RNA sequence: GGGAACGACUCGAGUAGAGUCGAAAAGUUGCGAUUGUUACAAUUGAUGUCACUGCAUUAUUAAAGCCAAACAAUACGAUGGCACCUGCAAUUGGUGUUGCCAUACCUUUGACACCUAUUACUAGUCGUAGGGAGUGGGAUUCGUCCCACUCCCUACAAAAGAAACAACAACAACAAC
Reactivity to DMS in 0.01 (KOAc 150mM, MgCl2 10mM, bicine 150mM(pH8.5), 24C), signal-to-noise 1, nucleotides 027 to 126: g010u000u000g010c050g020a160u010u000g010u000u000a040c110a030a100u010u020g000a100u000g020u000c080a070c090u000g010c080a060u000u010a050u000u000a020a030a110g030c130c100a050a160a070c100a040a040u000a060c150g010a050u000g030g000c010a040c010c010u010g030c160a010a090u000u010g010g010u000g000u020u010g010c070c030a070u000a090c210c050u000u000u000g020a250c190a010c010c000u020a020u010u020a080c070u000a040g000u000c100